[RMDB]
RNA sequence: GGGAACGACUCGAGUAGAGUCGAAAACCCAUUAACUUCGGUUAAUGGGAAAACUAUGGAAACCGGCUACCAUAGAACGUGGAAAUAGAUGAAAUGCCGGUAAAACCGCUGCCUUCGGGCAGCGGAAGAUGUACUAACAGUUCGCUGUUAGUACAUCAAAAGAAACAACAACAACAAC
Reactivity to 2A3 in 0.01 (KOAc 150mM, MgCl2 10mM, bicine 150mM(pH8.5), 24C), signal-to-noise 4, nucleotides 027 to 126: c000c000c000a000u000u000a010a010c000u030u060c200g070g000u010u000a000a000u000g000g000g020a040a040a000a000c000u000a010u000g000g010a160a170a030c000c000g020g020c020u040a040c010c000a010u000a010g030a080a030c070g070u150g090g090a130a150a160u170a200g190a110u140g060a040a100a090u110g000c000c000g010g000u010a000a000a000a010c000c000g010c000u010g000c000c010u050u040c140g100g020g050c000a010g020c030g010g000a000a000
Reactivity to DMS in 0.01 (KOAc 150mM, MgCl2 10mM, bicine 150mM(pH8.5), 24C), signal-to-noise 3, nucleotides 027 to 126: c000c000c000a020u000u000a000a010c000u000u020c180g030g010u000u010a010a000u000g010g000g000a050a040a030a100c000u000a010u000g000g010a030a130a110c000c000g010g000c010u000a170c000c000a010u000a010g000a060a120c150g000u000g020g010a070a090a110u000a080g010a170u010g000a060a050a090u010g010c000c000g010g000u010a030a050a140a100c000c010g000c000u000g000c000c000u000u020c180g030g020g020c000a000g000c000g000g000a000a040
Conditions: 150 mM KOAc, 10 mM MgCl2 and 150 mM bicine (pH 8.5), 24 C. Structure probing data (2A3 and DMS) for a 177-nucleotide construct. For DMS the reverse transcriptase was MarathonRT. The DMS profile rests on 3,757 reads. For 2A3 the reverse transcriptase was SuperScript II with manganese.